[RMDB]
RNA sequence: GGGAACGACUCGAGUAGAGUCGAAAAAUAGGCUUAUCAAGAGAGGUGGAGGGACUGGCCCGAUGAAACCCGGCAGCCAGAAAUGGUGCCAAUUCCUGCAGCGGAAACGUUGAAAGAUGAGCAGAUGAGAGUCGACGCUUCGGCGUCGACAAAAGAAACAACAACAACAAC
Reactivity to 2A3 in 0.01 (KOAc 150mM, MgCl2 10mM, bicine 150mM(pH8.5), 24C), signal-to-noise 1, nucleotides 027 to 129: a000u150a080g100g000c030u080u020a030u200c160a080a000g060a000g000a000g090g000u120g110g000a000g000g000g000a000c010u010g000g000c000c030c000g030a080u060g060a020a070a080c070c050c000g000g060c000a030g080c000c000a000g000a010a030a010u010g030g000u030g000c000c000a000a000u060u010c000c000u080g020c040a010g080c000g000g000a000a000a000c000g040u000u000g000a000a000a020g030a000u030g000a010g030c020a000g000a090u130g000a040g000a000